[RMDB]
RNA sequence: GGGAACGACUCGAGUAGAGUCGAAAAAGUUCGCGCUUCCGUGAAACGCGAAAAUCGGACGGUGGCUGCAAGUCUCAUCGCAAAACCGCGGCAAGUGGAGUUAGCGAGAGGAGGCUGGGUUUUGGCUAGAACACACGGUACUUCGGUACCGUGUGAACAACCACUUGUGUUUCGACACAAGUGGUUGAAAAGAAACAACAACAACAAC
Reactivity to DMS in 0.01 (KOAc 150mM, MgCl2 10mM, bicine 150mM(pH8.5), 24C), signal-to-noise 1, nucleotides 027 to 156: a190g000u000u000c000g020c000g010c020u000u000c030c250g000u040g030a020a010a020c020g010c010g030a030a040a050a090u000c030g010g000a030c060g020g010u000g010g010c020u010g020c040a120a080g010u000c000u000c010a080u000c020g030c010a050a070a080a110c030c030g010c000g040g080c120a110a100g010u000g010g020a130g000u000u000a160g010c050g000a050g000a090g020g020a050g020g010c000u000g010g000g010u000u000u000u010g030g000c060u010a150g010a080a140c000a000c000a010c020g000g010u000a000c000u000u000c250g020g030u000a000c000c010g010u000g030u000g020a020a110
Reactivity to 2A3 in 0.01 (KOAc 150mM, MgCl2 10mM, bicine 150mM(pH8.5), 24C), signal-to-noise 2, nucleotides 027 to 156: a000g070u070u050c030g000c000g010c040u100u000c070c070g100u090g080a090a060a030c050g000c010g060a070a000a000a100u140c020g010g000a020c030g000g070u040g010g010c030u040g010c050a040a050g030u000c000u000c010a140u000c000g000c020a000a010a040a000c000c000g040c010g100g050c300a230a030g030u020g050g020a080g010u050u060a020g030c010g000a030g000a030g070g020a010g000g000c010u030g040g000g000u020u040u100u060g030g000c010u040a080g080a250a010c000a010c000a000c010g000g000u010a010c000u010u050c240g060g000u000a000c010c000g000u000g000u000g000a000a000